[RMDB]
RNA sequence: GGGAACGACUCGAGUAGAGUCGAAAAAUAUAGCAAAAGGUAUUGUUUAUAUCAGUGCGACUUUUAACAAUACUAUGGUUACAGUAACUGAUGAAAUGGGAAAUGCUAUCGCUUGGAGUAGUGCAGGAGCACCAGUCAUAUUCGUAUGACUGGUGCUAAAAGAAACAACAACAACAAC
Reactivity to 2A3 in 0.01 (KOAc 150mM, MgCl2 10mM, bicine 150mM(pH8.5), 24C), signal-to-noise 3, nucleotides 027 to 126: a000u120a000u040a020g010c040a010a000a030a140g110g010u010a000u010u100g060u000u050u060a210u010a000u100c060a000g040u080g160c050g100a080c050u020u060u020u000a030a030c050a040a100u090a140c050u040a090u150g130g000u010u010a030c000a030g010u080a110a000c040u000g040a030u010g020a090a050a120u030g050g000g050a030a030a000u100g010c010u020a030u100c060g010c080u100u140g040g030a050g010u130a000g030u020g040c030a030g000g100
Reactivity to DMS in 0.01 (KOAc 150mM, MgCl2 10mM, bicine 150mM(pH8.5), 24C), signal-to-noise 3, nucleotides 027 to 126: a080u020a090u030a030g010c050a030a010a100a120g020g030u010a050u030u000g010u000u000u000a120u010a140u000c050a040g020u010g000c170g000a090c090u020u000u060u000a000a010c070a030a080u040a080c110u000a050u020g000g010u010u010a020c300a030g010u000a060a040c000u000g000a050u000g020a070a050a060u020g000g000g010a000a060a070u000g010c020u030a040u020c030g010c040u000u010g000g020a060g000u010a030g000u020g010c070a070g000g020

Structure probing data (2A3 and DMS) for a 177-nucleotide construct. 2A3 adducts were read by reverse transcription with SuperScript II with manganese. The reactions ran in a buffer of 150 mM KOAc, 10 mM MgCl2 and 150 mM bicine (pH 8.5), at 24 C.